[RMDB]
RNA sequence: GGGAACGACUCGAGUAGAGUCGAAAAUAGCCAGAUCCAGCAACAACGGCUGGAUCUUUCCGCCAGUCGUCGUGAAUGGCUGGAGACAACAGGCGCUUACGAUCGUCGCUGGAAUAUGCUGCUAAGAGUCCUGGCAUAGUUUCGACUAUGCCAGGACAAAAGAAACAACAACAACAAC
Reactivity to 2A3 in 0.01 (KOAc 150mM, MgCl2 10mM, bicine 150mM(pH8.5), 24C), signal-to-noise 1, nucleotides 027 to 126: u080a000g060c000c000a010g010a080u000c000c000a010g000c020a010a060c000a110a030c210g090g020c020u000g000g000a000u010c000u000u030u000c000c020g030c000c000a030g000u020c000g000u000c030g050u000g070a130a030u090g050g000c030u020g010g030a050g050a070c070a060a000c000a050g000g030c000g010c050u060u060a040c030g070a150u100c040g120u040c050g010c040u060g010g100a020a000u180a060u150g060c100u040g040c010u060a090a020g090a030
Reactivity to DMS in 0.01 (KOAc 150mM, MgCl2 10mM, bicine 150mM(pH8.5), 24C), signal-to-noise 1, nucleotides 027 to 126: u000a110g020c030c150a050g000a060u000c000c000a000g030c000a070a070c140a080a130c170g000g000c000u000g010g000a030u000c010u000u000u010c040c060g030c010c000a020g020u000c030g030u000c070g050u000g040a130a040u000g000g000c010u000g000g000a070g000a100c280a100a070c040a070g010g020c040g020c100u000u010a050c070g010a120u010c060g000u000c070g000c050u000g000g000a100a090u000a040u000g010c040u000g000c070u020a090a100g010a140